[RMDB]
RNA sequence: GGGAACGACUCGAGUAGAGUCGAAAAGAAUGGCAGUUUGUCACAUGCAUUCAUUUGAAGAGAUCUCUUUUGUUAUACCUCGGCUAUGAGUAUACAUUUUUAUAGCUUAUGCGUUUGACUUUACUGAGGGAGUAUGGUACUUCGGUACCAUACUCCCAAAAGAAACAACAACAACAAC
Reactivity to 2A3 in 0.01 (KOAc 150mM, MgCl2 10mM, bicine 150mM(pH8.5), 24C), signal-to-noise 1, nucleotides 027 to 126: g260a050a130u050g000g000c000a040g000u000u000u090g220u200c000a000c000a000u080g010c000a000u090u060c000a010u050u150u300g080a040a000g000a010g060a060u000c060u010c040u130u080u040u100g010u080u270a040u000a040c000c000u010c000g000g000c140u000a000u020g000a000g060u000a020u000a030c000a110u000u110u160u160u060a070u020a020g000c080u170u000a000u000g040c000g020u000u000u000g000a000c000u050u000u050a070c030u040g060a050
Structure probing data (2A3) for a 177-nucleotide construct. Reactivities are given for positions 27 through 126.